[RMDB]
RNA sequence: GGGAACGACUCGAGUAGAGUCGAAAAAACAGCUGGACGUACGUACGAGCAGUUUUCGAAAUAAACGUACGUACGAAAUAAAUAAAUUCUACUCGAUGCGAAACAAAGCAAAGUCGUUCCCAGGGAACUGCAGAGUUAGAUUCGUCUAACUCUGCAGAAAAGAAACAACAACAACAAC
Reactivity to 2A3 in 0.01 (KOAc 150mM, MgCl2 10mM, bicine 150mM(pH8.5), 24C), signal-to-noise 1, nucleotides 027 to 126: a000a020c150a040g120c090u170g010g100a030c000g000u000a000c000g020u000a010c000g020a030g090c030a040g030u000u020u070u190c170g090a150a000a000u130a020a040a010c010g000u000a000c000g000u000a000c000g010a010a000a010u100a010a020a020u080a000a050a020u010u000c000u000a010c000u010c010g060a070u050g000c000g050a100a140a150c120a130a100a000g050c020a070a000a050g000u000c000g000u010u000c000c000c000a000g000g000g000a040a000
Reactivity to DMS in 0.01 (KOAc 150mM, MgCl2 10mM, bicine 150mM(pH8.5), 24C), signal-to-noise 1, nucleotides 027 to 126: a120a030c090a160g010c190u030g000g030a300c000g000u000a020c000g050u000a000c000g080a110g020c170a150g000u000u030u000u020c250g000a090a030a080u000a050a230a130c000g020u000a000c000g000u000a030c000g000a050a020a050u000a040a090a090u000a180a070a020u000u000c000u000a000c000u000c000g000a180u030g000c000g000a140a110a090c300a000a090a190g020c020a100a200a030g030u050c000g030u000u000c000c000c010a050g020g030g020a230a150

Chemical mapping of a 177-nucleotide RNA with 2A3 and DMS. For DMS, 687 sequencing reads were counted. Conditions: 150 mM KOAc, 10 mM MgCl2 and 150 mM bicine (pH 8.5), 24 C. The data come from the RNA Mapping Database (RMDB), library M2PK90.